Source: RMDB library OK1LIB, as collected in RNAgym. The record gives the reactivity of an RNA of 177 nucleotides to 2A3 and DMS. In probing experiments dimethyl sulfate is read out at A N1 and C N3, which are open when not base-paired. The RNA was probed in 150 mM KOAc, 10 mM MgCl2 and 150 mM bicine (pH 8.5) at 24 C.
RNA sequence: GGGAACGACUCGAGUAGAGUCGAAAAGAGAAGUAAACUGUUAGACGCCAGCGGCUUGACCCGCUGUGGCCGCGGCGGCCUAGUUGAGACUGAAACGGCGGGUAAGAGCUCGGAGAGACCGAGCAGAAGCUAAUCCUAUGUUCGCAUAGGAUUAGCUAAAAGAAACAACAACAACAAC
Reactivity to 2A3 in 0.01 (KOAc 150mM, MgCl2 10mM, bicine 150mM(pH8.5), 24C), signal-to-noise 2, nucleotides 027 to 126: g100a010g060a140a010g040u190a110a090a060c070u090g090u180u160a030g010a010c000g000c000c020a050g000c000g010g000c000u020u030g110a190c000c000c000g010c020u000g000u010g000g000c000c000g020c030g010g000c010g000g000c020c020u090a070g000u030u080g030a040g050a090c060u040g040a080a080a000c010g000g000c020g000g000g010u010a060a030g030a020g010c010u000c000g020g000a190g010a030g060a150c000c000g000a000g000c000a000g040a010
Reactivity to DMS in 0.01 (KOAc 150mM, MgCl2 10mM, bicine 150mM(pH8.5), 24C), signal-to-noise 3, nucleotides 027 to 126: g000a090g010a130a100g000u040a090a090a050c090u000g010u010u010a070g000a170c010g000c020c010a040g080c020g010g010c010u000u020g000a080c020c010c000g000c020u000g010u010g000g000c000c000g020c040g000g000c000g000g000c170c000u020a080g000u000u000g000a080g000a300c050u010g020a090a060a030c020g000g010c000g000g000g030u000a040a020g030a070g010c000u000c000g020g000a300g040a220g010a130c020c000g000a010g020c000a050g010a190